An RNA of 177 nucleotides, treated with DMS and 2A3 and read out base by base. High 2A3 reactivity points to a flexible backbone, as in loops and unpaired stretches. DMS adducts were read by reverse transcription with MarathonRT.

RNA sequence: GGGAACGACUCGAGUAGAGUCGAAAAGAUAUGGACAACCUGGACAACAGCGUACUGGGUCGGAAACGACCUUACGACAUGUCUUGGUUGUCCUAAGUCAAAACCGUCCCGGUUCGCCGGGACGGAAGAACAAGAAUGAGUUCGCUCAUUCUUGUUCAAAAGAAACAACAACAACAAC
Reactivity to DMS in 0.01 (KOAc 150mM, MgCl2 10mM, bicine 150mM(pH8.5), 24C), signal-to-noise 4, nucleotides 027 to 126: g000a010u000a050u010g000g000a010c010a000a000c000c000u000g000g000a020c000a140a100c250a170g010c000g010u000a010c300u010g000g010g020u000c000g000g010a010a010a050c010g010a010c010c000u000u000a000c000g010a030c050a300u010g010u000c010u000u000g000g000u000u000g000u010c000c000u000a000a040g000u010c020a100a060a130a150c000c000g000u000c000c000c000g000g010u000u020c270g020c000c000g000g000g000a010c010g010g000a010a030
Reactivity to 2A3 in 0.01 (KOAc 150mM, MgCl2 10mM, bicine 150mM(pH8.5), 24C), signal-to-noise 6, nucleotides 027 to 126: g000a000u020a010u040g000g000a000c000a010a000c010c020u010g000g020a010c060a300a030c090a300g020c000g010u040a080c210u170g080g000g030u000c000g000g000a010a010a000c000g000a000c030c010u010u010a010c000g050a020c100a270u300g000u000c000u010u000g000g000u010u000g000u000c000c000u000a000a010g000u000c000a000a000a070a110c000c000g000u000c000c000c020g000g030u080u070c300g040c010c000g000g000g000a000c000g000g000a010a040